[RMDB]
RNA sequence: GGGAACGACUCGAGUAGAGUCGAAAAGUGUAGCGUCACUUUCAUGGCGGUACUAUGAAUUGAUGCAAGGUGUGGAGCGACCUUAAACAGUUCUGGUGGUGCUCUGAAUGGAGUGCUCUACUGAGAUUUAACUUAUGCACGUUCGCGUGCAUAAGAACAUAAAGAAAAGCUUCGGCUUUUCUUUAUGAAAAGAAACAACAACAACAAC
Reactivity to 2A3 in 0.01 (KOAc 150mM, MgCl2 10mM, bicine 150mM(pH8.5), 24C), signal-to-noise 8, nucleotides 027 to 156: g110u100g050u090a030g040c010g010u030c020a030c080u090u130u080c000a030u030g020g030c070g090g090u100a060c020u030a050u090g020a020a030u030u030g030a040u050g050c030a030a010g010g000u030g020u100g040g010a020g020c020g010a010c010c000u060u100a100a050a010c030a050g000u020u000c010u030g030g020u030g010g060u010g000c010u020c020u060g160a090a070u230g020g010a010g010u020g020c010u020c020u060a080c040u070g070a050g060a270u050u130u180a060a010c000u000u000a000u000g000c000a000c010g010u030u040c180g020c000g080u000g000c000a000u000a000a000g000a010a000
Reactivity to DMS in 0.01 (KOAc 150mM, MgCl2 10mM, bicine 150mM(pH8.5), 24C), signal-to-noise 2, nucleotides 027 to 156: g030u000g040u010a080g030c060g010u000c010a010c080u000u000u000c030a000u030g010g030c010g010g020u000a300c010u000a040u010g010a020a070u000u010g010a060u000g020c100a120a070g020g010u000g040u010g010g010a090g010c070g020a130c030c020u020u000a090a110a060c030a110g010u000u000c040u010g010g050u000g000g010u000g010c030u000c050u000g000a100a090u000g010g030a110g020u000g030c000u000c040u010a070c070u010g010a200g000a140u000u000u000a060a110c000u000u000a010u010g010c000a030c000g010u000u010c300g030c020g040u000g000c000a020u000a000a010g000a080a220

Chemical mapping of a 207-nucleotide RNA with 2A3 and DMS. For 2A3 the reverse transcriptase was SuperScript II with manganese. Conditions: 150 mM KOAc, 10 mM MgCl2 and 150 mM bicine (pH 8.5), 24 C. DMS adducts were read by reverse transcription with MarathonRT.